Structure probing data (DMS and 2A3) for a 177-nucleotide construct.
RNA sequence: GGGAACGACUCGAGUAGAGUCGAAAAGAUGCCACAGUUGACUGAACCUGUCUUCUAACAGUAGUUAAUUGCCAGUAUUUCAAACAAGAUUUGAAAUACGAGUUUCCCAGAAUAAUUUAUUUGGACAGACCCUUUCACUUUUCGAAGUGAAAGGGUCAAAAGAAACAACAACAACAAC
Reactivity to DMS in 0.01 (KOAc 150mM, MgCl2 10mM, bicine 150mM(pH8.5), 24C), signal-to-noise 1, nucleotides 027 to 126: g000a020u010g030c140c130a300c100a030g000u010u000g000a000c040u040g060a050a180c180c000u000g030u000c100u000u080c290u000a010a030c060a030g000u000a040g000u000u000a000a060u000u010g020c190c000a070g040u030a000u000u000u000c000a000a000a030c000a140a280g000a300u000u000u000g010a000a000a000u000a000c000g000a200g000u000u000u000c000c000c030a160g000a000a000u100a050a050u000u080u010a080u000u000u030g000g000a140c260a060
Reactivity to 2A3 in 0.01 (KOAc 150mM, MgCl2 10mM, bicine 150mM(pH8.5), 24C), signal-to-noise 2, nucleotides 027 to 126: g070a030u070g070c030c020a030c000a010g060u050u010g100a080c050u010g010a020a080c060c000u010g000u010c050u110u050c030u090a070a080c000a010g070u050a000g070u110u010a010a070u020u030g010c000c010a000g000u000a000u000u000u000c010a000a010a000c030a210a130g150a230u000u000u000g000a000a000a000u000a000c020g000a060g010u010u000u000c000c000c000a010g190a010a050u220a060a010u100u040u170a100u220u070u100g040g000a020c040a110
The RNA was probed in 150 mM KOAc, 10 mM MgCl2 and 150 mM bicine (pH 8.5) at 24 C. DMS adducts were read by reverse transcription with MarathonRT. It was measured as part of the RMDB library RFM100.